The record gives the reactivity of an RNA of 207 nucleotides to DMS and 2A3. It was measured as part of the RMDB library RNAMAK. For DMS, 8,537 sequencing reads were counted. DMS adducts were read by reverse transcription with MarathonRT. The RNA was probed in 150 mM KOAc, 10 mM MgCl2 and 150 mM bicine (pH 8.5) at 24 C.
[RMDB]
RNA sequence: GGGAACGACUCGAGUAGAGUCGAAAAUCCUAAGUCCACUCUCAAGCAAUGCAAUGAUGCAUACUACCCACCACUCGGAAACGAGUGAGGUAUGUUGAGCAUUGCGAAGGAGUGGAUAUGGAAAACCCAAUAAUCAGGUUCGCCUGAUUAUUGGGAACAGAGUAUGUAUGUUCGCAUACAUACUCUGAAAAGAAACAACAACAACAAC
Reactivity to DMS in 0.01 (KOAc 150mM, MgCl2 10mM, bicine 150mM(pH8.5), 24C), signal-to-noise 4, nucleotides 027 to 156: u000c010c000u000a050a180g040u000c010c000a020c000u000c000u000c000a060a300g010c000a000a020u000g000c000a090a090u010g030a080u000g000c010a010u000a010c000u000a040c010c020c020a300c100c000a020c000u000c010g020g010a180a100a260c010g010a050g030u000g010a030g010g010u000a010u000g010u000u000g000a070g000c020a010u000u020g000c000g010a160a070g000g000a050g040u000g010g010a000u000a030u000g000g000a090a030a090a170c000c000c010a010a010u000a000a010u000c010a000g010g020u000u000c300g010c000c000u000g010a000u000u000a000u000u000g000g000g000a020a090
Reactivity to 2A3 in 0.01 (KOAc 150mM, MgCl2 10mM, bicine 150mM(pH8.5), 24C), signal-to-noise 6, nucleotides 027 to 156: u020c000c000u010a100a020g030u000c000c000a000c000u000c010u020c060a080a000g000c000a010a000u000g000c010a050a300u170g010a030u090g060c000a010u000a020c010u070a080c040c070c040a070c020c000a000c020u000c000g030g040a070a080a060c010g000a000g000u000g000a010g010g000u010a000u010g010u010u020g020a000g000c000a000u000u000g000c010g010a010a010g010g000a000g000u000g000g000a000u010a020u010g010g000a000a080a030a070c000c000c000a000a000u000a000a000u000c010a000g040g040u050u110c210g100c070c000u000g000a000u000u000a000u000u000g000g010g000a010a000